An RNA of 207 nucleotides, treated with 2A3 and DMS and read out base by base. The DMS profile rests on 2,438 reads. DMS adducts were read by reverse transcription with MarathonRT.
RNA sequence: GGGAACGACUCGAGUAGAGUCGAAAAGGAAAGAAAGUGAAAGCUCACACCUGAGGGGAGGACAGAAAGGUCAGAAGGGUUGUGACUCCCCGCCUCCCAAAAAGAUCCCCUCAGUGCUACCCUUAAAGUCACUUUCCUGAAAGGGGGGGUCCUUGCCGAUGACUAUCAGAUUCGUCUGAUAGUCAUCAAAAGAAACAACAACAACAAC
Reactivity to 2A3 in 0.01 (KOAc 150mM, MgCl2 10mM, bicine 150mM(pH8.5), 24C), signal-to-noise 2, nucleotides 027 to 156: g000g020a030a020a000g020a100a090a020g040u080g060a220a110a070g040c050u060c070a050c000a020c020c000u000g000a000g040g000g010g000a010g050g020a020c060a030g160a110a150a000g090g000u060c030a030g050a160a070g130g000g000u030u030g070u050g020a010c010u020c010c040c000c000g020c000c030u020c000c010c030a030a090a000a000a020g020a040u000c020c010c020c000u000c000a010g020u020g030c000u080a060c070c020c000u070u090a130a120a010g000u010c010a010c000u000u000u000c010c000u030g010a060a030a100g020g000g000g000g000g000g000u010c000c020u040u070g060c030c080
Reactivity to DMS in 0.01 (KOAc 150mM, MgCl2 10mM, bicine 150mM(pH8.5), 24C), signal-to-noise 2, nucleotides 027 to 156: g010g010a130a040a100g020a030a050a070g010u000g000a090a100a140g030c090u000c150a080c050a090c080c020u010g040a040g000g050g010g000a070g020g020a130c030a100g000a040a070a050g000g000u020c040a060g010a090a100g000g010g050u000u000g030u000g000a050c010u000c000c010c000c000g030c050c010u010c000c010c030a030a070a140a070a130g000a110u000c000c000c000c010u010c030a070g040u000g070c050u000a080c090c050c110u000u000a040a040a130g000u000c050a100c020u000u000u010c000c010u000g010a060a110a180g020g000g010g010g000g050g010u000c010c050u000u010g010c130c180
Reactivities are given for positions 27 through 156. The RNA was probed in 150 mM KOAc, 10 mM MgCl2 and 150 mM bicine (pH 8.5) at 24 C.